Structure probing data (DMS and 2A3) for a 177-nucleotide construct. Conditions: 150 mM KOAc, 10 mM MgCl2 and 150 mM bicine (pH 8.5), 24 C. For DMS the reverse transcriptase was MarathonRT.

RNA sequence: GGGAACGACUCGAGUAGAGUCGAAAAGUAGUUGGUAUCAUGACAGUGAGCUGAACUACGUAGCGUCGUGAUUUAUGAGUGGCACAGCUAAUAGUAGGAGGAAGGAGGUUUUGCGCGUGCCUGUGAAAUAUAGGUGGGUCUUCGGACCCACCUAUAUAAAAGAAACAACAACAACAAC
Reactivity to DMS in 0.01 (KOAc 150mM, MgCl2 10mM, bicine 150mM(pH8.5), 24C), signal-to-noise 2, nucleotides 027 to 126: g000u000a010g010u000u000g000g010u000a090u010c020a080u000g010a090c220a200g020u000g000a030g000c030u020g010a040a030c030u020a020c010g000u020a100g010c040g000u000c040g030u000g000a070u010u010u010a060u040g000a100g020u020g010g010c020a060c060a190g000c040u020a000a080u030a080g020u030a030g000g040a140g000g000a070a060g000g020a090g000g000u000u000u020u010g020c070g010c100g010u010g010c020c030u010g010u010g000a090a050
Reactivity to 2A3 in 0.01 (KOAc 150mM, MgCl2 10mM, bicine 150mM(pH8.5), 24C), signal-to-noise 2, nucleotides 027 to 126: g030u000a030g000u000u010g060g010u080a150u300c020a010u090g100a070c090a030g050u030g110a070g000c040u070g050a210a010c000u020a000c000g090u020a020g000c040g080u060c020g020u050g080a180u060u130u220a070u150g070a020g130u110g000g000c020a030c020a000g000c000u070a060a030u040a270g140u030a070g090g040a040g040g000a060a100g000g110a070g030g020u040u050u130u090g030c060g000c060g000u040g020c030c000u010g000u000g040a070a220
For 2A3, 629 sequencing reads were counted. The data come from the RNA Mapping Database (RMDB), library OK1LIB. For 2A3 the reverse transcriptase was SuperScript II with manganese. For DMS, 3,510 sequencing reads were counted.